[RMDB]
RNA sequence: GGGAACGACUCGAGUAGAGUCGAAAACGGCUGUCACACCGAGGCAGACCGGAGUCCUUGGGACAGACUGGUUGGCAAAGCUGAAGAUAGAGACCUUUGGCCCUUUUGGGACACAGUUUCCAGCCCCUGGUCUGGUGGGACCCUGGAUCUGGGUCAACGUCCAUAUAUAUUUCGAUAUAUAUGGACGAAAAGAAACAACAACAACAAC
Reactivity to DMS in 0.01 (KOAc 150mM, MgCl2 10mM, bicine 150mM(pH8.5), 24C), signal-to-noise 2, nucleotides 027 to 156: c030g010g000c000u010g000u050c040a090c080a240c080c020g000a190g000g000c000a080g000a170c010c020g000g030a130g010u000c010c000u000u020g030g010g000a140c050a040g020a040c000u000g050g010u000u020g020g060c050a090a080a110g010c020u010g010a100a090g000a120u000a110g000a220g000a040c040c010u020u000u000g020g000c000c040c030u020u020u000u020g040g010g020a040c020a100c160a060g030u000u010u010c000c030a090g000c030c000c150c020u020g010g060u010c060u010g020g010u000g000g030g040a030c000c010c020u000g030g000a120u000c040u010g020g000g000u000c010a050a180
Reactivity to 2A3 in 0.01 (KOAc 150mM, MgCl2 10mM, bicine 150mM(pH8.5), 24C), signal-to-noise 4, nucleotides 027 to 156: c020g010g040c000u000g020u030c010a070c030a060c200c110g090a160g000g000c020a000g010a140c020c020g000g010a020g070u000c010c000u070u080g100g040g020a010c000a010g000a040c020u030g000g060u100u110g070g000c080a100a060a020g000c010u050g030a030a010g020a100u210a110g090a010g050a120c010c000u030u020u060g030g010c020c000c000u080u170u190u300g090g000g010a050c080a000c010a100g010u040u030u000c000c000a000g010c020c010c010c000u040g000g040u020c010u040g060g010u090g020g030g000a020c030c010c030u050g030g070a100u040c050u030g030g000g010u010c010a050a020

The record gives the reactivity of an RNA of 207 nucleotides to DMS and 2A3. For 2A3 the reverse transcriptase was SuperScript II with manganese. Source: RMDB library OK3TST, as collected in RNAgym. The RNA was probed in 150 mM KOAc, 10 mM MgCl2 and 150 mM bicine (pH 8.5) at 24 C.